RNA sequence: GGGAACGACUCGAGUAGAGUCGAAAACCGUAGGAGUCUCGGGAGAGCUUGGAUUUAUGGACUAACUCACAUUCGAAAGAGUGUGAGAGGUCCAUUGUCAGCUCAGAGACUCCUAAACGGAAACGACCUCGGCUUCGUUCGCGAAGCCGAGGUCGAACCUUAUCUAGUAGUUCGCUACUAGAUAAGGAAAAGAAACAACAACAACAAC
Reactivity to 2A3 in 0.01 (KOAc 150mM, MgCl2 10mM, bicine 150mM(pH8.5), 24C), signal-to-noise 2, nucleotides 027 to 156: c010c000g000u000a000g000g000a010g000u020c010u010c030g020g130g130a180g010a000g040c040u060u200g120g010a110u260u300u240a000u060g010g000a000c010u060a300a040c000u100c000a000c000a000u010u000c010g080a110a070a050g000a060g020u000g000u000g000a000g000a000g010g000u010c000c010a000u000u000g000u000c000a000g000c000u000c000a000g000a000g000a000c000u000c000c000u000a010a010a000c010g050g040a060a040a000c010g050a040c000c000u000c010g000g000c020u040u000c000g070u060u110c230g030c020g070a020a000g000c020c020g000a010g010g010u000c000g000a000a010